[RMDB]
RNA sequence: GGGAACGACUCGAGUAGAGUCGAAAAAAAUAGAACCUGAAACCGUAUGUCUACAAAGUGUCAGAGCAGAGCAAUCUGCGAUGGCGUGCCUUUUGUUUAAUGAGUCUGCGAGUCAGUGUUUGUGGCAACUACGUUAGUUCUUCGGAACUAACGUAGUAAAAGAAACAACAACAACAAC
Reactivity to DMS in 0.01 (KOAc 150mM, MgCl2 10mM, bicine 150mM(pH8.5), 24C), signal-to-noise 7, nucleotides 027 to 126: a040a060a080u030a070g010a060a050c030c000u000g010a070a070a110c090c020g020u010a020u030g000u000c030u010a040c050a040a020a060g030u010g000u000c010a030g000a300g010c010a020g000a010g010c300a080a090u000c010u010g010c010g010a100u010g010g000c010g010u030g000c210c050u000u010u000u010g000u000u010u010a070a050u030g010a050g010u000c020u000g000c020g000a080g000u010c010a020g000u010g010u000u000u010g010u000g010g010c140a060
Reactivity to 2A3 in 0.01 (KOAc 150mM, MgCl2 10mM, bicine 150mM(pH8.5), 24C), signal-to-noise 8, nucleotides 027 to 126: a000a000a010u230a030g040a020a010c000c000u010g020a060a010a010c020c000g030u040a040u260g040u000c020u050a070c030a020a060a010g060u060g000u050c010a000g010a010g010c000a000g000a000g010c040a030a100u010c000u000g000c010g000a010u010g010g000c000g010u050g050c010c020u120u080u050u070g140u050u100u080a120a110u160g010a010g050u020c020u010g000c010g030a030g040u030c010a010g020u010g100u180u050u080g160u040g050g010c020a020

Chemical mapping of a 177-nucleotide RNA with DMS and 2A3. Conditions: 150 mM KOAc, 10 mM MgCl2 and 150 mM bicine (pH 8.5), 24 C.